[RMDB]
RNA sequence: GGGAACGACUCGAGUAGAGUCGAAAACAUACGGACUUCGGUCCGUAUGAAAGAACCUCAAAUUGACGCUAACUUCCGCGUCAUCGCGAGGAAGCGAGGAAAAAAUCGAGGUGUUCGCACCUCGAAAGCUCCAUGUAGUCUUCGGACUACAUGGAGCAAAAGAAACAACAACAACAAC
Reactivity to DMS in 0.01 (KOAc 150mM, MgCl2 10mM, bicine 150mM(pH8.5), 24C), signal-to-noise 2, nucleotides 027 to 126: c010a010u000a000c010g010g000a010c000u000u020c160g030g000u000c020c010g010u000a000u000g030a060a030a230g030a070a100c010c000u010c030a040a290a060u020u000g000a070c000g030c010u000a150a210c190u010u000c160c170g000c010g000u000c020a030u000c090g020c300g020a010g010g000a100a090g000c130g000a100g050g000a000a000a040a080a090a020u000c070g020a000g000g020u000g010u030u000c170g050c020a030c010c000u000c000g000a000a000a080
Reactivity to 2A3 in 0.01 (KOAc 150mM, MgCl2 10mM, bicine 150mM(pH8.5), 24C), signal-to-noise 2, nucleotides 027 to 126: c000a000u020a010c010g000g000a020c010u040u050c250g070g010u000c000c000g000u020a000u000g010a000a000a000g060a060a080c000c000u010c020a020a050a070u060u070g010a010c010g030c030u080a160a080c140u300u090c090c060g030c010g040u040c030a000u030c040g010c030g030a050g050g060a050a010g070c050g110a100g000g070a020a090a000a020a010a040u050c010g010a010g010g010u010g020u060u020c170g010c100a000c020c000u020c000g010a000a000a000
Structure probing data (DMS and 2A3) for a 177-nucleotide construct. It was measured as part of the RMDB library M2PK50. The reactions ran in a buffer of 150 mM KOAc, 10 mM MgCl2 and 150 mM bicine (pH 8.5), at 24 C. For 2A3, 1,612 sequencing reads were counted. Values cover nucleotides 27 to 126. High DMS reactivity at an A or C suggests that its Watson-Crick edge is free.